Structure probing data (DMS and 2A3) for a 177-nucleotide construct. 2A3 is a SHAPE reagent: it acylates the 2'-hydroxyl of flexible nucleotides of all four kinds. High DMS reactivity at an A or C suggests that its Watson-Crick edge is free. Reactivities are given for positions 27 through 126. It was measured as part of the RMDB library OK1LIB. The RNA was probed in 150 mM KOAc, 10 mM MgCl2 and 150 mM bicine (pH 8.5) at 24 C.
RNA sequence: GGGAACGACUCGAGUAGAGUCGAAAAGAAGAGACCGCCACGAGGAGUCAGGGUUCAGACACGAUCCAAGAGAACACGGUUACACUGACUGUGGAGCGGAAGAGGCAAAGAGAGUGGCGGAAGAGAACCAUUAUCGUGCUUUCGAGCACGAUAAUGGAAAAGAAACAACAACAACAAC
Reactivity to DMS in 0.01 (KOAc 150mM, MgCl2 10mM, bicine 150mM(pH8.5), 24C), signal-to-noise 2, nucleotides 027 to 126: g000a080a130g010a060g010a160c030c030g000c030c000a020c020g000a100g010g000a090g000u010c040a060g000g000g030u000u010c110a080g010a020c040a040c110g010a060u000c040c050a050a080g010a190g000a060a070c040a060c010g000g010u010u020a070c120a120c140u010g000a000c000u000g010u040g000g010a070g010c020g000g000a050a070g000a030g000g020c060a050a070a060g000a090g000a160g020u000g010g020c030g000g000a040a050g020a070g000a110a150
Reactivity to 2A3 in 0.01 (KOAc 150mM, MgCl2 10mM, bicine 150mM(pH8.5), 24C), signal-to-noise 2, nucleotides 027 to 126: g090a030a020g060a020g100a080c010c000g000c000c000a020c010g070a090g060g030a020g020u030c010a020g050g000g000u080u140c060a040g020a110c020a020c110g010a000u000c020c020a150a050g080a020g000a100a020c080a010c070g020g010u030u050a040c110a040c050u080g030a000c000u030g040u160g080g060a060g020c050g010g000a030a020g050a020g020g060c040a090a100a000g110a020g010a010g010u000g000g000c000g010g000a010a000g030a000g000a000a020